[RMDB]
RNA sequence: GGGAACGACUCGAGUAGAGUCGAAAAACCUCAGUCUUCGGACUGAGGUGAGCCGAGCAUGGUGGCCGUGGGAACUCCUCCUUGGUGACAAGGGCCCACGGGGUGCGGCACGCUUCGGCGUGCCGAAGUACUCUUGUUGUUUCGACAACAAGAGUACAAAAGAAACAACAACAACAAC
Reactivity to 2A3 in 0.01 (KOAc 150mM, MgCl2 10mM, bicine 150mM(pH8.5), 24C), signal-to-noise 2, nucleotides 027 to 126: a000c000c000u000c010a010g000u000c000u020u140c210g170g000a010c000u000g000a000g000g000u000g000a020g010c010c000g040a120g130c100a110u230g040g050u080g080g190c010c000g000u010g000g000g010a070a110c110u040c030c020u000c010c000u040u010g040g040u100g040a040c010a010a010g010g000g000c000c000c000a000c000g010g000g000g000u160g040c030g000g000c000a000c000g000c000u070u130c240g070g000c000g010u020g010c000c010g010a030a000
Reactivity to DMS in 0.01 (KOAc 150mM, MgCl2 10mM, bicine 150mM(pH8.5), 24C), signal-to-noise 3, nucleotides 027 to 126: a000c000c000u000c000a010g000u000c000u000u010c210g030g010a010c000u010g000a000g010g000u000g000a060g000c030c010g010a160g020c140a100u010g010g020u000g010g020c020c010g000u010g000g000g010a140a060c090u000c040c070u000c010c000u010u000g000g010u000g000a210c020a020a010g000g010g000c000c000c010a010c010g000g010g000g020u010g010c000g000g010c020a010c000g000c000u000u010c130g020g010c000g010u000g000c000c000g000a000a040